Conditions: 150 mM KOAc, 10 mM MgCl2 and 150 mM bicine (pH 8.5), 24 C. The record gives the reactivity of an RNA of 207 nucleotides to 2A3 and DMS. DMS adducts were read by reverse transcription with MarathonRT. The DMS profile rests on 4,743 reads. The data come from the RNA Mapping Database (RMDB), library OK3TST.
[RMDB]
RNA sequence: GGGAACGACUCGAGUAGAGUCGAAAAUCAUUUCAUACUUUGUGUAUUUAUCCAUGUUUUGAGCUAAUUCCAGAAUGUUGUCAGUCAUAUUGGGAUGCGAUAUAGUAAUUUGGUUUUUAAGUAUGAUUUUGGAACUCUAAGUUACUAAAAUAGUAGAACCUAAAUCCAUGUUCGCAUGGAUUUAGGUAAAAGAAACAACAACAACAAC
Reactivity to 2A3 in 0.01 (KOAc 150mM, MgCl2 10mM, bicine 150mM(pH8.5), 24C), signal-to-noise 3, nucleotides 027 to 156: u040c010a020u040u000u010c010a020u020a080c020u040u110u110g040u030g050u200a230u100u250u110a070u040c000c010a010u040g060u000u080u030u060g040a040g000c040u050a130a110u040u000c010c000a020g040a100a100u010g040u130u070g180u220c130a080g050u060c020a050u030a070u040u100g030g000g000a010u040g010c020g030a020u060a010u020a160g090u070a040a110u050u010u010g020g000u040u040u040u090u110a050a010g020u000a030u040g030a040u060u050u090u110g040g030a070a050c020u020c050u060a130a000g070u070u050a040c020u040a090a070a020a150u230a040g120u220a060g050a070
Reactivity to DMS in 0.01 (KOAc 150mM, MgCl2 10mM, bicine 150mM(pH8.5), 24C), signal-to-noise 2, nucleotides 027 to 156: u000c030a070u000u000u000c020a070u000a020c020u000u010u000g020u020g000u000a080u000u000u000a100u020c040c020a080u000g010u000u010u000u010g020a140g020c050u010a090a140u010u010c000c010a120g000a150a160u000g020u000u000g010u000c040a080g030u010c040a100u000a160u000u020g020g000g020a170u000g010c050g030a080u000a190u000a010g030u000a020a020u000u000u000g010g000u000u000u000u010u000a060a100g010u000a080u010g000a180u000u000u000u010g020g010a040a050c040u000c030u000a020a040g030u000u000a030c000u000a020a030a070a130u000a120g010u010a070g010a050